[RMDB]
RNA sequence: GGGAACGACUCGAGUAGAGUCGAAAAAUCGGUCGGUCGCCGCGCUCUCCCGUCCCUCGAAGCGGCGGACGAUCCGGAUGGAACGACACGCCCAUCGGCGGCGCGCUGCUCGCAAGAGCGGCGCGCCGGUAUCUUAACUGUUCGCAGUUAAGAUACCAAAAGAAACAACAACAACAAC
Reactivity to 2A3 in 0.01 (KOAc 150mM, MgCl2 10mM, bicine 150mM(pH8.5), 24C), signal-to-noise 2, nucleotides 027 to 126: a000u070c010g000g000u020c010g000g000u010c010g000c020c000g000c000g040c030u070c010u040c020c050c030g090u100c000c010c000u120c050g060a130a010g000c000g000g000c010g020g000a000c010g010a050u110c030c060g070g030a040u050g080g060a120a040c040g100a020c050a020c170g090c010c000c000a040u060c050g090g020c070g020g000c000g000c000g000c000u000g000c010u000c030g040c070a090a020g000a000g000c000g000g000c000g010c000g000c010c000